RNA sequence: GGGAACGACUCGAGUAGAGUCGAAAACGGGGUUGGCUAUAGUUGAUUUCGAACCGUAUGCUUAUGUAUAUGGAAUGAUUUGUACGCUUUACGCAUGUGUACACUCACUCUCAGUUCACUCUUGUGAGAGAAGGGAGAGAGAGAUAUUUUGCGAUUAGGUAUGGUUGAUCUUCGGAUUGGUCAUAUCAAAAGAAACAACAACAACAAC
Reactivity to 2A3 in 0.01 (KOAc 150mM, MgCl2 10mM, bicine 150mM(pH8.5), 24C), signal-to-noise 3, nucleotides 027 to 156: c030g000g000g000g000u030u040g030g000c030u030a020u030a100g010u020u040g020a130u020u040u030c030g030a050a030c000c010g000u000a000u010g010c020u180u070a080u200g010u000a020u000a000u020g000g000a060a050u040g020a050u050u020u090g000u000a000c010g000c000u030u030u070a020c010g000c010a000u020g010u000g000u000a000c010a000c010u020c000a040c000u000c000u000c010a040g030u020u020c010a030c030u020c020u080u180g040u150g090a010g000a000g000a020a030g070g020g000a000g000a010g000a000g000a000g020a000u020a070u050u150u060u060g010c000g020a070u020u110a030
Reactivity to DMS in 0.01 (KOAc 150mM, MgCl2 10mM, bicine 150mM(pH8.5), 24C), signal-to-noise 3, nucleotides 027 to 156: c060g000g020g040g030u000u000g000g030c050u010a090u000a110g020u000u000g010a110u000u000u000c020g020a070a220c010c000g000u010a020u000g020c030u000u000a130u010g060u000a040u000a030u020g020g020a090a140u010g010a100u010u000u000g020u000a060c080g020c040u000u000u000a120c090g020c050a060u010g020u000g020u000a020c010a120c090u010c000a190c010u010c020u000c010a090g010u000u000c010a110c010u000c030u000u010g010u000g020a080g000a060g010a060a100g010g010g010a050g000a030g010a100g010a030g000a090u010a020u000u000u000u010g020c000g000a190u000u000a080